The record gives the reactivity of an RNA of 177 nucleotides to DMS and 2A3. For 2A3 the reverse transcriptase was SuperScript II with manganese. Reactivities are rounded to 0.1 and cut off at 0 and 3. The reactions ran in a buffer of 150 mM KOAc, 10 mM MgCl2 and 150 mM bicine (pH 8.5), at 24 C. Source: RMDB libraries RFM100 and RFMREP, as collected in RNAgym.

[RMDB]
RNA sequence: GGGAACGACUCGAGUAGAGUCGAAAAGUUAAGAGAGCCGCAAGCGCAGGGAAGGCCUCCCCGCACGGGUGGGGGAAAGCGGCCGGUGCAGCGCGGGGACAGGCACUCGGGCUGGCACUGGCUGCUACUAUCUGAGUUGGUUCGCCAACUCAGAUAGAAAAGAAACAACAACAACAAC
Reactivity to DMS in 0.01 (KOAc 150mM, MgCl2 10mM, bicine 150mM(pH8.5), 24C), signal-to-noise 4, nucleotides 027 to 126: g010u020u010a070a120g010a100g010a140g000c010c010g010c070a060a060g010c060g020c050a070g000g000g020a100a110g000g000c110c030u000c030c010c020c030g020c050a120c150g010g010g030u020g010g000g000g000g010a050a100a010g020c020g010g010c020c000g010g020u000g000c000a030g030c000g000c010g000g000g010g000a100c110a060g010g020c110a160c010u000c010g010g010g000c010u010g000g030c000a010c000u010g010g010c000u000g000c010u000a050
Reactivity to 2A3 in 0.01 (KOAc 150mM, MgCl2 10mM, bicine 150mM(pH8.5), 24C), signal-to-noise 7, nucleotides 027 to 126: g050u080u100a080a010g050a010g010a030g060c030c020g030c070a070a050g020c050g030c070a030g010g020g040a100a030g040g010c000c000u030c000c000c000c000g080c010a080c110g140g030g020u080g010g000g000g010g030a040a070a010g000c010g000g000c000c000g000g000u000g000c010a010g000c110g030c030g120g010g000g020a090c070a140g070g070c050a040c050u000c000g010g080g000c000u030g100g050c000a000c010u000g000g000c000u000g000c000u010a010